[RMDB]
RNA sequence: GGGAACGACUCGAGUAGAGUCGAAAAAGAUAUGGAUAGAGGGUACGUAUCACGUGACAUGAAAUUGCUGUCGGAAACGACAGGAUUUCAACAGCACGUGAGUACGUACCCUCUAUCCUAAGUCACACAUAGAUAGCGACUUCGGUCGCUAUCUAUGAAAAGAAACAACAACAACAAC
Reactivity to DMS in 0.01 (KOAc 150mM, MgCl2 10mM, bicine 150mM(pH8.5), 24C), signal-to-noise 2, nucleotides 027 to 126: a100g010a050u000a300u000g000g000a020u000a040g000a020g010g020g020u000a010c000g030u000a050u000c000a020c020g040u000g010a060c070a240u010g000a000a000a000u000u010g000c010u000g000u000c000g000g010a140a060a220c000g000a000c000a000g000g000a000u000u000u000c010a010a060c300a160g000c020a020c010g030u010g000a090g010u000a020c000g020u000a000c010c000c000u000c000u000a000u020c000c000u000a020a080g010u000c020a110c260a240